The record gives the reactivity of an RNA of 207 nucleotides to 2A3.

RNA sequence: GGGAACGACUCGAGUAGAGUCGAAAAACCAGCAGCUCGUUGCAUUCGAGUUCACAGGUCAAACGAUAGCGGCCACUUCGGUGGUUGAGAUAUGAUCGGCCUCCAGCUGUCACCUAGCUGGGGAGAUUUGCGGAACCUGCGGAAGGAUCAUUAAUGACCACCUAGAUCAGUUCGCUGAUCUAGGUGGAAAAGAAACAACAACAACAAC
Reactivity to 2A3 in 0.01 (KOAc 150mM, MgCl2 10mM, bicine 150mM(pH8.5), 24C), signal-to-noise 1, nucleotides 027 to 156: a000c000c000a010g080c010a000g000c010u000c000g040u200u300g060c050a160u170u040c000g000a000g000u100u100c040a050c040a020g100g000u070c070a040a000a030c020g000a010u050a060g080c030g030g000c040c000a000c010u040u000c300g070g010u010g000g000u000u030g010a010g050a010u050a000u160g050a010u000c010g000g130c010c000u000c000c000a010g000c000u040g050u070c000a100c140c100u120a000g000c000u040g000g010g130g000a080g000a040u130u060u110g000c050g030g030a030a030c000c000u010g020c030g050g030a110a050g070g020a010u080c010a090u010u250a110a080u050g050a010
About this RNA: It was measured as part of the RMDB library ARCHII.